Description
An RNA of 177 nucleotides, treated with DMS and 2A3 and read out base by base. DMS adducts were read by reverse transcription with MarathonRT. Reactivities are given for positions 27 through 126. For 2A3 the reverse transcriptase was SuperScript II with manganese.
RNA sequence: GGGAACGACUCGAGUAGAGUCGAAAAGCGUUUAUGAGCUACAUGAACGAAGAGCAUACUUAGUCAAAGUAUGCAGAAGCCUUCUGUAGCUCAGAGGGCAGGACAAAUCUUUGACUAAGAUUUGGGACUCCACUAUCACUUUCGAGUGAUAGUGGAGAAAAGAAACAACAACAACAAC
Reactivity to DMS in 0.01 (KOAc 150mM, MgCl2 10mM, bicine 150mM(pH8.5), 24C), signal-to-noise 4, nucleotides 027 to 126: g020c030g010u000u000u010a080u020g020a100g020c090u010a060c000a000u010g000a010a010c090g000a050a090g020a300g010c020a010u000a030c010u000u010a110g010u010c210a050a040a010g010u000a070u000g020c020a060g000a140a140g010c050c040u000u000c000u010g000u020a090g000c120u000c000a010g010a030g010g010g000c020a100g000g000a100c020a010a020a040u000c000u000u000u010g010a100c190u000a040a010g010a080u000u000u000g000g000g020a250
Reactivity to 2A3 in 0.01 (KOAc 150mM, MgCl2 10mM, bicine 150mM(pH8.5), 24C), signal-to-noise 2, nucleotides 027 to 126: g020c050g050u030u010u050a120u050g010a020g070c030u030a020c020a040u190g020a040a010c060g030a070a070g040a020g090c010a010u030a050c010u050u020a050g050u090c020a000a050a020g000u010a020u040g010c010a020g080a100a020g020c000c000u000u000c000u000g040u060a020g000c030u000c000a000g000a010g000g000g000c020a020g080g040a030c010a010a020a020u050c010u030u020u070g060a030c010u070a020a030g010a050u030u020u010g040g000g050a050